An RNA of 177 nucleotides, treated with 2A3 and DMS and read out base by base. For 2A3, 3,332 sequencing reads were counted. The RNA was probed in 150 mM KOAc, 10 mM MgCl2 and 150 mM bicine (pH 8.5) at 24 C.
RNA sequence: GGGAACGACUCGAGUAGAGUCGAAAAAUCAGUGCAGAAGCGAAAGCUUCGUUCAACCUGGGGACUGUGUUUCAUCCUCUUGCAAGCAGUCGAUUAACUGUUGAUGGCUAUCUCUGUCAUAAACAGACUUUUAUUUAGCCUUCGGGCUAAAUAAAAGAAAAGAAACAACAACAACAAC
Reactivity to 2A3 in 0.01 (KOAc 150mM, MgCl2 10mM, bicine 150mM(pH8.5), 24C), signal-to-noise 3, nucleotides 027 to 126: a000u050c020a010g010u010g070c040a020g000a030a000g000c010g050a100a000a020g000c000u000u000c000g000u030u060c030a060a050c000c010u020g000g000g010g020a010c030u050g020u000g070u180u070u080c050a060u050c010c010u050c020u040u090g050c020a050a040g000c010a010g070u080c060g070a130u120u150a130a070c010u020g010u010u010g030a060u020g030g000c000u040a060u170c110u060c080u120g010u000c010a020u060a060a030a030c010a000g020a030
Reactivity to DMS in 0.01 (KOAc 150mM, MgCl2 10mM, bicine 150mM(pH8.5), 24C), signal-to-noise 4, nucleotides 027 to 126: a070u010c040a050g000u010g020c100a110g010a000a010g010c000g010a120a070a190g000c000u000u000c000g000u020u010c090a100a220c070c040u000g000g010g010g010a030c030u000g000u020g010u010u010u000c070a160u000c040c010u000c060u030u000g010c090a120a170g020c030a040g010u000c060g010a110u020u010a090a140c000u010g010u000u000g000a050u010g010g000c000u000a090u000c160u000c130u010g000u000c020a010u000a060a000a020c030a040g000a250